[RMDB]
RNA sequence: GGGAACGACUCGAGUAGAGUCGAAAAGGUCACUGGUUCGCCAGUGACCAAAGGCGGGAGAGAGAGAAGCCACUCACCGAAAGGACUCAGCCAAGCACCCAAAAACUACCUGGUUCGCCAGGUAGAAGAUUGUAAUUCACUUCGGUGAAUUACAAUCAAAAGAAACAACAACAACAAC
Reactivity to 2A3 in 0.01 (KOAc 150mM, MgCl2 10mM, bicine 150mM(pH8.5), 24C), signal-to-noise 2, nucleotides 027 to 126: g000g010u000c000a010c010u010g000g040u040u040c090g080c070c000a000g000u000g000a000c010c000a010a010a010g000g000c030g030g130g000a090g010a010g000a000g000a020g020a130a040g080c040c030a040c010u030c020a050c010c010g060a100a040a010g030g010a040c000u000c060a000g010c020c000a040a010g030c020a120c000c030c010a040a020a020a010a030c000u010a000c000c000u010g040g000u030u020c090g060c080c000a000g010g010u000a000g000a000a000
Reactivity to DMS in 0.01 (KOAc 150mM, MgCl2 10mM, bicine 150mM(pH8.5), 24C), signal-to-noise 3, nucleotides 027 to 126: g010g030u010c000a010c000u000g000g010u010u010c200g020c000c000a000g010u000g010a000c000c020a000a030a060g000g010c040g000g020g000a070g000a180g000a070g000a100g010a090a130g000c020c100a120c040u020c060a170c010c020g020a050a080a060g000g000a180c020u000c010a060g020c040c030a110a090g030c100a100c020c000c010a030a060a080a170a170c000u000a000c000c010u000g000g010u000u000c280g010c000c010a010g000g010u000a000g000a060a060
Chemical mapping of a 177-nucleotide RNA with 2A3 and DMS. The RNA was probed in 150 mM KOAc, 10 mM MgCl2 and 150 mM bicine (pH 8.5) at 24 C. For DMS the reverse transcriptase was MarathonRT. DMS (dimethyl sulfate) methylates the pairing face of unpaired adenines and cytosines.